[RMDB]
RNA sequence: GGGAACGACUCGAGUAGAGUCGAAAAAGGGCUCGAAGACGGAUCCCCGGGCAAACCUACUCGAGCGAGGCGGAGAACGAGCGCCAGUUCGUGCGCGGCGCCCUGAAGUUGCUUCGGCUUCUUCUUGACAUAUAGUGACCUUCGGGUCACUAUAUGUAAAAGAAACAACAACAACAAC
Reactivity to DMS in 0.01 (KOAc 150mM, MgCl2 10mM, bicine 150mM(pH8.5), 24C), signal-to-noise 2, nucleotides 027 to 126: a090g010g000g020c120u000c030g020a020a080g010a120c140g010g010a070u000c020c000c030c050g000g000g000c190a080a120a060c030c010u000a020c010u000c010g000a040g030c020g000a060g000g000c030g020g000a090g000a060a060c070g010a070g010c010g000c070c030a130g000u000u010c100g020u010g000c080g020c100g000g010c040g010c030c020c040u000g010a060a050g010u010u000g000c040u000u000c070g020g000c030u000u000c020u000u010c020u000u000g010